[RMDB]
RNA sequence: GGGAACGACUCGAGUAGAGUCGAAAAAGGCUAGUAGCAAGGUCUCGGCGUAGGUCUUGCUCCGCGGUUGCGUGGAGCGUUGCGUCCACAGCGAUCGUGGACGGUUGUGGAGACAGCAGCUCCAUACGCGGGUAGCGUCGUUCGCGAUGUUACCCGCAAAAGAAACAACAACAACAAC
Reactivity to DMS in 0.01 (KOAc 150mM, MgCl2 10mM, bicine 150mM(pH8.5), 24C), signal-to-noise 8, nucleotides 027 to 126: a050g010g020c030u000a090g010u020a030g010c010a010a020g000g010u000c000u000c020g020g020c210g030u040a030g010g000u000c010u000u000g000c000u010c020c060g000c040g000g010u000u010g010c050g000u000g000g010a030g000c030g000u010u030g010c070g000u000c000c000a000c000a070g020c020g010a060u010c040g020u010g000g000a060c100g000g010u010u010g020u000g000g010a060g000a140c050a080g000c050a140g000c010u000c000c000a040u020a050c200
Reactivity to 2A3 in 0.01 (KOAc 150mM, MgCl2 10mM, bicine 150mM(pH8.5), 24C), signal-to-noise 9, nucleotides 027 to 126: a000g140g010c050u080a030g060u080a000g060c000a010a010g000g020u000c010u010c040g300g050c130g160u270a010g000g010u000c000u000u000g000c000u000c000c000g030c040g020g020u030u050g020c050g000u020g010g010a020g010c090g150u240u190g020c030g090u020c000c000a000c010a020g000c010g050a070u070c050g050u120g070g020a020c040g040g040u050u040g010u010g010g020a020g010a040c030a030g030c020a010g020c010u000c000c010a010u020a060c070